[RMDB]
An RNA of 177 nucleotides, treated with 2A3 and DMS and read out base by base. For 2A3 the reverse transcriptase was SuperScript II with manganese. The reactions ran in a buffer of 150 mM KOAc, 10 mM MgCl2 and 150 mM bicine (pH 8.5), at 24 C.

RNA sequence: GGGAACGACUCGAGUAGAGUCGAAAACUCGUAGAUGCCGUCGAGAUCGUCCGCGACCGUCGUCAGGUAGCACGACGACAGCUGCGAGCGGCGCGUGCCCGAGUUGAACAGCGUCGGCGUCGAGCUACUGACGAGUCAUAUUCGUAUGACUCGUCAGAAAAGAAACAACAACAACAAC
Reactivity to 2A3 in 0.01 (KOAc 150mM, MgCl2 10mM, bicine 150mM(pH8.5), 24C), signal-to-noise 9, nucleotides 027 to 126: c010u010c020g050u060a040g000a040u030g010c030c000g010u020c010g010a020g020a270u070c020g040u030c030c020g010c020g040a140c030c030g060u090c020g060u080c040a020g040g120u070a050g040c060a010c130g090a010c020g020a020c050a020g020c010u050g020c020g000a040g020c020g010g000c020g000c040g070u130g030c010c030c010g030a050g060u110u190g110a120a040c050a050g050c010g020u020c020g010g010c010g010u040c020g010a030g010c030u100a090
Reactivity to DMS in 0.01 (KOAc 150mM, MgCl2 10mM, bicine 150mM(pH8.5), 24C), signal-to-noise 9, nucleotides 027 to 126: c020u000c030g010u010a160g000a040u000g010c020c010g010u000c020g010a100g010a120u000c030g010u000c040c040g010c020g010a040c030c070g020u010c070g010u000c060a190g010g010u000a080g010c100a190c080g000a020c010g010a020c020a030g020c020u000g010c010g010a070g000c030g010g010c040g010c110g010u000g010c040c020c020g000a110g010u000u010g010a090a130c110a090g010c020g010u000c030g010g000c020g020u000c030g010a140g010c090u000a120